This 207-nucleotide RNA was probed chemically with 2A3 and DMS. The RNA was probed in 150 mM KOAc, 10 mM MgCl2 and 150 mM bicine (pH 8.5) at 24 C. For 2A3 the reverse transcriptase was SuperScript II with manganese. Values are in units of 0.01, from 0 to 300, in steps of 10. In probing experiments dimethyl sulfate is read out at A N1 and C N3, which are open when not base-paired. It was measured as part of the RMDB library M2RFPK.

[RMDB]
RNA sequence: GGGAACGACUCGAGUAGAGUCGAAAAGGCUGUGUUGUGGCGGGGGCGAAACAGGAUCGACAAGGGUGUAAAGAUCGCUCUUUUACUCGGCAUGAUACCACCGUUAUCGGGUCAACAGAGUACUUGCUAGGGGAACGGGUGUUCGCACCCGUUCCAACUUGAAGCAUUGAUUCGUCAAUGCUUCAAGAAAAGAAACAACAACAACAAC
Reactivity to 2A3 in 0.01 (KOAc 150mM, MgCl2 10mM, bicine 150mM(pH8.5), 24C), signal-to-noise 2, nucleotides 027 to 156: g040g030c030u000g070u010g050u150u070g100u110g050g000c050g010g010g000g000g000c040g010a040a000a000c050a020g040g040a060u050c020g030a040c040a050a060g060g040g000u040g020u070a090a120a030g040a070u080c030g020c050u020c080u070u070u020u030a060c030u040c020g000g000c020a020u100g020a030u060a100c000c040a010c000c040g060u050u080a110u160c050g030g010g010u030c000a000a020c030a030g080a010g050u090a170c040u090u110g050c030u120a070g020g040g000g120a000a000c000g000g000g000u010g010u040u060c100g010c030a020c010c010c000g000u000u010c000c000a000a000
Reactivity to DMS in 0.01 (KOAc 150mM, MgCl2 10mM, bicine 150mM(pH8.5), 24C), signal-to-noise 2, nucleotides 027 to 156: g000g050c030u010g100u000g010u030u000g060u020g050g000c080g010g040g040g000g040c070g030a120a050a110c070a200g010g000a090u000c030g000a140c060a090a100g010g020g040u000g000u000a090a060a130g000a090u000c050g050c050u010c030u000u000u000u000a100c010u000c000g010g000c040a100u000g010a170u000a090c030c030a170c000c060g000u010u010a040u010c040g020g030g010u000c020a050a110c080a070g000a130g000u000a070c070u010u000g000c000u000a160g030g010g000g010a010a020c030g000g000g040u010g010u000u000c300g020c000a020c000c000c000g010u000u000c000c000a000a020